[RMDB]
RNA sequence: GGGAACGACUCGAGUAGAGUCGAAAAGAUAUGGACCAUGGGAGCUGGACGUCGGAAACGACGUCGACAGCAUCGAUCAUGUGUCCUAAGUCAAAGUAGGCUUUUUGGUUCGCCAAAAAGCCUACAAGUAUUAGAAGGACUUCGGUCCUUCUAAUACAAAAGAAACAACAACAACAAC
Reactivity to 2A3 in 0.01 (KOAc 150mM, MgCl2 10mM, bicine 150mM(pH8.5), 24C), signal-to-noise 2, nucleotides 027 to 126: g020a000u070a030u130g000g020a010c000c000a000u010g020g010g040a050g020c000u010g000g020a000c010g010u000c010g010g050a050a050a030c010g000a000c000g000u000c020g000a030c000a000g030c000a140u260c020g050a050u020c010a010u030g260u100g020u090c010c000u010a050a010g010u030c040a060a030a100g000u010a000g010g000c020u000u000u000u000u000g030g030u020u130c200g040c070c000a020a000a000a000a000g000c000c000u010a000c000a000a000
Reactivity to DMS in 0.01 (KOAc 150mM, MgCl2 10mM, bicine 150mM(pH8.5), 24C), signal-to-noise 4, nucleotides 027 to 126: g000a050u000a300u010g010g000a020c010c000a010u010g000g000g000a040g010c000u000g000g000a010c000g000u000c000g010g000a070a080a220c010g010a010c000g010u000c000g010a150c010a010g010c010a260u000c170g000a090u000c000a000u000g010u000g010u000c000c000u000a020a110g010u000c010a080a130a110g000u000a000g000g010c000u000u000u000u000u000g000g010u000u010c240g000c000c000a000a000a000a000a000g000c000c000u000a000c000a030a070
An RNA of 177 nucleotides, treated with 2A3 and DMS and read out base by base. The DMS profile rests on 4,975 reads. Values cover nucleotides 27 to 126. It was measured as part of the RMDB library TTRDEL. The RNA was probed in 150 mM KOAc, 10 mM MgCl2 and 150 mM bicine (pH 8.5) at 24 C.